[RMDB]
Chemical mapping of a 177-nucleotide RNA with DMS and 2A3. For 2A3 the reverse transcriptase was SuperScript II with manganese. For DMS the reverse transcriptase was MarathonRT. The 2A3 profile rests on 2,148 reads. DMS (dimethyl sulfate) methylates the pairing face of unpaired adenines and cytosines.
RNA sequence: GGGAACGACUCGAGUAGAGUCGAAAAGAAAGUAGCGACAAUCUAAGGCGAUUGGAAGCCGCCUAAACAUACGGCGAAAGUAUGACCGUAACUAUCCGGGAAGAUAGAAAAGAAAAGCUACGAAAAAGGGUAUACAUGACUUCGGUCAUGUAUACCCAAAAGAAACAACAACAACAAC
Reactivity to DMS in 0.01 (KOAc 150mM, MgCl2 10mM, bicine 150mM(pH8.5), 24C), signal-to-noise 2, nucleotides 027 to 126: g070a190a060a090g000u000a000g000c000g000a200c120a130a090u020c050u000a110a040g010g010c000g000a030u000u030g010g000a080a200g000c130c000g020c010c000u000a030a090a090c300a060u000a010c000g010g000c080g060a110a220a100g020u040a000u060g000a190c010c000g000u000a100a110c000u000a000u010c000c060g000g030g020a090a090g000a000u000a000g010a020a010a030a070g000a070a000a030a060g000c020u010a000c020g010a000a010a150a090a060
Reactivity to 2A3 in 0.01 (KOAc 150mM, MgCl2 10mM, bicine 150mM(pH8.5), 24C), signal-to-noise 2, nucleotides 027 to 126: g100a030a020a010g000u000a000g000c010g000a010c010a010a020u010c010u100a080a000g030g000c020g010a050u030u110g070g030a020a000g060c000c000g010c020c000u090a070a040a010c090a020u040a000c040g030g010c150g140a190a040a000g070u020a010u070g080a230c000c000g000u000a000a020c020u000a000u000c010c030g000g010g060a020a000g020a060u000a010g190a080a150a010a000g080a010a040a000a020g000c000u000a000c010g030a170a000a000a010a000